This 177-nucleotide RNA was probed chemically with DMS and 2A3.
RNA sequence: GGGAACGACUCGAGUAGAGUCGAAAACUAGCAUGAGCGCAUAAGGUAGCGUAGCAUUAUUUAAAGCUAACGUCGAAGUACGCGGUACUGCACCUGGCAUAUUUGCAACUGCAUAAUGAACCACACCCUCUAGAUUCAGGUUCGCCUGAAUCUAGAGAAAAGAAACAACAACAACAAC
Reactivity to DMS in 0.01 (KOAc 150mM, MgCl2 10mM, bicine 150mM(pH8.5), 24C), signal-to-noise 4, nucleotides 027 to 126: c040u010a090g020c040a060u000g000a160g020c050g000c040a070u000a050a090g010g030u010a070g000c030g000u000a020g020c010a070u010u010a120u000u010u010a100a080a140g010c020u010a030a080c050g010u000c040g000a070a090g010u010a020c060g010c070g010g020u000a060c070u010g010c040a070c040c020u000g000g010c030a080u010a080u000u010u000g020c040a080a130c100u000g000c040a030u010a060a050u010g010a080a100c030c030a020c160a090c130c060
Reactivity to 2A3 in 0.01 (KOAc 150mM, MgCl2 10mM, bicine 150mM(pH8.5), 24C), signal-to-noise 5, nucleotides 027 to 126: c010u020a030g040c020a050u080g050a040g050c060g000c040a050u040a130a040g080g060u060a040g050c010g000u000a010g030c040a030u040u170a070u120u300u240a160a180a010g000c020u060a150a050c020g060u070c040g120a080a020g040u030a010c100g000c040g200g020u040a050c040u030g010c010a020c010c010u020g000g020c020a030u050a110u140u090u110g030c050a120a090c050u050g000c000a010u050a110a040u160g040a020a030c010c010a020c020a030c060c020